Chemical mapping of a 177-nucleotide RNA with 2A3 and DMS. For 2A3 the reverse transcriptase was SuperScript II with manganese.
RNA sequence: GGGAACGACUCGAGUAGAGUCGAAAAUAAACCAAUACGCUAGCUUCUGUCAAGAGAUGUGCCUAGACUUAUUUCUUUAAUGACAAUCAGUAACGUAAAGAAUUGCUCACUCAAUGCCGAAAAUAGGCCUUCUUCCUUUAUUCGUAAAGGAAGAAGGAAAAGAAACAACAACAACAAC
Reactivity to 2A3 in 0.01 (KOAc 150mM, MgCl2 10mM, bicine 150mM(pH8.5), 24C), signal-to-noise 6, nucleotides 027 to 126: u040a000a060a020c010c000a010a030u110a050c050g010c060u030a040g010c030u050u020c010u080g090u080c040a070a040g020a030g000a140u030g030u040g050c010c040u090a070g050a160c020u070u100a060u040u090u000c020u040u140u120a210a150u140g040a040c040a040a090u100c020a060g030u050a080a020c040g010u020a010a070a060g040a040a050u070u050g010c020u020c030a030c000u030c020a030a070u090g030c020c010g090a070a060a050a090u100a040g050g030
Reactivity to DMS in 0.01 (KOAc 150mM, MgCl2 10mM, bicine 150mM(pH8.5), 24C), signal-to-noise 5, nucleotides 027 to 126: u010a080a120a250c060c030a060a150u010a060c100g000c030u010a080g010c050u000u000c060u000g020u000c070a060a070g000a060g010a030u000g010u000g000c040c050u000a080g000a100c080u000u000a040u010u010u000c020u000u000u020a060a060u010g010a040c080a060a070u010c100a050g010u000a040a050c060g000u010a050a060a100g000a040a060u010u000g000c040u000c030a070c090u000c060a050a070u010g000c040c030g010a080a040a050a090u010a110g000g010